An RNA of 177 nucleotides, treated with DMS and 2A3 and read out base by base. 2A3 adducts were read by reverse transcription with SuperScript II with manganese. Source: RMDB library OK2TRN, as collected in RNAgym. For DMS the reverse transcriptase was MarathonRT. For DMS, 2,120 sequencing reads were counted.
RNA sequence: GGGAACGACUCGAGUAGAGUCGAAAAGUGAUGUGGCAGUUCACGCAGGCGGUCCGCGGUCUGGCCGAUGGCUGUGCGGACCUCGGGAUUCCGGUGACCGGUGGCAACGUGAGUUUCUACAACCAAAGACCUAAAUACGGUUCGCCGUAUUUAGGUCAAAAGAAACAACAACAACAAC
Reactivity to DMS in 0.01 (KOAc 150mM, MgCl2 10mM, bicine 150mM(pH8.5), 24C), signal-to-noise 2, nucleotides 027 to 126: g050u000g010a080u000g040u020g040g000c050a080g000u000u000c040a020c050g040c080a120g020g010c170g020g000u000c000c000g000c060g000g000u000c060u010g010g030c010c040g010a090u010g010g010c020u000g020u010g040c010g030g010a030c010c010u000c020g010g000g030a140u000u000c040c040g010g020u010g020a070c050c040g000g000u000g000g000c040a060a130c060g000u000g010a060g000u010u000u000c000u000a050c060a020a120c070c040a040a080a080
Reactivity to 2A3 in 0.01 (KOAc 150mM, MgCl2 10mM, bicine 150mM(pH8.5), 24C), signal-to-noise 1, nucleotides 027 to 126: g120u100g020a230u100g040u020g030g000c010a000g020u080u020c030a000c060g070c030a030g050g160c060g020g000u000c000c000g000c010g020g090u040c030u120g110g030c010c030g110a090u230g080g000c070u050g050u120g150c000g110g030a050c010c010u000c020g050g000g000a040u170u070c000c010g000g090u120g080a120c000c010g080g060u050g040g080c000a040a000c030g020u010g050a040g000u010u040u000c000u030a010c010a070a080c030c010a000a180a000